Overview:
Conditions: 150 mM KOAc, 10 mM MgCl2 and 150 mM bicine (pH 8.5), 24 C. An RNA of 177 nucleotides, treated with DMS and 2A3 and read out base by base.
[RMDB]
RNA sequence: GGGAACGACUCGAGUAGAGUCGAAAAUUGGACAAGGAAGAGCGCCGACCUCACCAACACCAUCUAUCCAGACAAGAUCACCCAGAUUCCUGCUGUGAAGAUGUAUGAGCUGGGAAGCUCAGCUGUGUAGAGUUAGUACUUUCGAGUACUAACUCUAAAAAGAAACAACAACAACAAC
Reactivity to DMS in 0.01 (KOAc 150mM, MgCl2 10mM, bicine 150mM(pH8.5), 24C), signal-to-noise 9, nucleotides 027 to 126: u010u000g020g010a060c080a090a100g010g010a100a070g000a100g020c070g020c050c030g010a100c070c040u000c060a090c070c050a080a080c080a070c090c020a030u000c030u000a100u000c040c030a050g000a070c070a040a060g000a060u000c020a080c040c040c040a160g000a080u000u000c030c030u000g020c020u000g010u010g000a060a040g000a050u000g010u000a080u000g000a020g010c010u000g010g010g000a110a040g020c020u000c010a030g010c080u000g010u010g010
Reactivity to 2A3 in 0.01 (KOAc 150mM, MgCl2 10mM, bicine 150mM(pH8.5), 24C), signal-to-noise 6, nucleotides 027 to 126: u080u070g050g020a020c040a090a030g050g020a040a080g030a010g050c050g000c030c020g050a080c010c000u030c010a040c020c020a040a040c010a020c030c000a020u000c010u070a250u020c020c000a010g090a150c020a070a030g010a050u030c020a050c040c040c020a000g010a040u100u090c010c010u030g040c010u040g030u070g100a040a040g040a040u050g040u070a210u070g020a010g000c000u020g010g070g060a060a000g000c000u010c030a010g030c040u070g010u030g060
Description: It was measured as part of the RMDB library OK2TST. DMS adducts were read by reverse transcription with MarathonRT.